The record gives the reactivity of an RNA of 177 nucleotides to DMS and 2A3. It was measured as part of the RMDB library OK2TRN. The DMS profile rests on 1,011 reads. DMS (dimethyl sulfate) methylates the pairing face of unpaired adenines and cytosines. 2A3 adducts were read by reverse transcription with SuperScript II with manganese.
RNA sequence: GGGAACGACUCGAGUAGAGUCGAAAACAUCCACUGCUACGGCAGUGGAUGAACGAGGUAGGUACGCCUACCUCGAAAGGUAGAUGUUACCAUACACAUUAAACGUCCAUGGUACGCCAUGGACGAAGAUCCUACCCGGAUUCGUCCGGGUAGGAUCAAAAGAAACAACAACAACAAC
Reactivity to DMS in 0.01 (KOAc 150mM, MgCl2 10mM, bicine 150mM(pH8.5), 24C), signal-to-noise 1, nucleotides 027 to 126: c010a000u000c000c000a030c000u010g030c000u000a060c300g070g020c000a000g000u020g000g020a000u000g000a060a030c080g010a050g040g010u000a030g000g000u010a070c220g030c030c000u000a010c000c010u000c010g000a010a180a090g000g000u000a080g010a040u000g000u000u000a030c000c040a050u030a100c030a040c050a070u000u000a110a090a130c040g000u000c010c000a000u000g000g020u010a130c260g000c000c000a010u000g000g010a000c000g020a010a010
Reactivity to 2A3 in 0.01 (KOAc 150mM, MgCl2 10mM, bicine 150mM(pH8.5), 24C), signal-to-noise 2, nucleotides 027 to 126: c010a000u000c010c000a000c020u010g000c000u040a080c230g130g000c010a010g000u000g000g000a000u000g000a010a020c020g000a030g000g050u010a000g000g020u050a050c300g070c000c000u000a000c000c010u020c000g000a100a010a010g040g010u020a030g000a060u060g030u170u110a030c000c010a040u030a040c070a010c020a060u100u140a120a170a040c030g000u000c000c000a000u000g000g000u060a020c260g080c020c000a000u000g020g000a010c000g020a000a000